RNA sequence: GGGAACGACUCGAGUAGAGUCGAAAAGAUAUGGAGCGGAGGAGCCUUGGAUUUAUACCCAUGCGGGGUACAUCGGAAACGAUGUACGCCGUGCAUGGGUAUUGUCAGGCUCGCCGCUCCUAAGUCACUUAUCCUUUAAGUUCGCUUAAAGGAUAAGAAAAGAAACAACAACAACAAC
Reactivity to DMS in 0.01 (KOAc 150mM, MgCl2 10mM, bicine 150mM(pH8.5), 24C), signal-to-noise 3, nucleotides 027 to 126: g010a050u000a300u000g010g010a010g020c010g010g010a080g010g010a010g000c000c000u000u010g040g020a020u000u020u000a010u000a020c000c000c000a010u000g000c000g010g000g000g020u000a000c010a000u000c000g010g000a160a110a270c010g010a020u000g010u000a000c000g000c000c000g010u000g020c020a010u010g010g010g020u000a000u000u000g000u000c000a030g010g000c000u000c000g010c010c000g020c000u000c000c000u000a020a060g010u000c040a250
Reactivity to 2A3 in 0.01 (KOAc 150mM, MgCl2 10mM, bicine 150mM(pH8.5), 24C), signal-to-noise 1, nucleotides 027 to 126: g040a010u090a070u250g000g000a000g000c000g030g020a170g050g060a010g110c010c030u070u100g060g020a030u010u300u060a030u050a000c000c000c000a000u010g000c030g000g010g010g010u000a000c000a000u010c010g000g040a090a060a040c030g000a000u020g010u000a010c010g010c010c000g070u050g010c000a020u000g000g040g000u010a000u000u000g000u010c000a010g000g000c010u000c010g000c010c000g010c000u000c010c000u000a000a000g000u000c000a000